[RMDB]
RNA sequence: GGGAACGACUCGAGUAGAGUCGAAAAGGAUUGCACAUUUACCCCCUCAAAUGUCGGUACCCCCUACCGAUCUAGACCCAUCAUGGCCUAUGAUUCAGAACAUGUCUAGCCUCAAGGGGGAAUUGGGGCAUGAAUUAGGUUUCGACCUAAUUCAUGCAAAAGAAACAACAACAACAAC
Reactivity to DMS in 0.01 (KOAc 150mM, MgCl2 10mM, bicine 150mM(pH8.5), 24C), signal-to-noise 4, nucleotides 027 to 126: g010g010a100u010u000g010c100a050c080a040u000u000u000a220c030c010c000c010c020u000c160a080a060a060u010g010u000c010g010g000u010a070c050c020c000c020c040u000a090c000c020g000a020u000c060u010a050g000a070c040c130c100a090u000c120a050u000g000g010c100c090u000a060u010g010a050u000u010c110a110g000a070a100c110a070u010g000u010c030u000a080g000c230c060u000c090a050a060g010g000g000g000g010a030a050u000u000g020g010g010
Reactivity to 2A3 in 0.01 (KOAc 150mM, MgCl2 10mM, bicine 150mM(pH8.5), 24C), signal-to-noise 1, nucleotides 027 to 126: g170g040a120u110u220g140c120a030c060a230u130u160u300a300c000c000c000c000c000u060c030a130a110a020u170g040u030c010g000g070u080a200c000c000c010c000c030u040a000c000c030g030a010u020c000u020a010g010a030c000c020c000a050u120c010a010u100g090g050c010c000u080a040u160g020a030u070u000c010a050g010a100a030c010a030u040g000u010c010u010a000g000c000c010u080c060a050a010g000g000g010g010g080a000a040u100u000g070g000g050

Structure probing data (DMS and 2A3) for a 177-nucleotide construct. High DMS reactivity at an A or C suggests that its Watson-Crick edge is free. The reactions ran in a buffer of 150 mM KOAc, 10 mM MgCl2 and 150 mM bicine (pH 8.5), at 24 C. Reactivities are given for positions 27 through 126. The DMS profile rests on 3,306 reads. It was measured as part of the RMDB library OK2TST.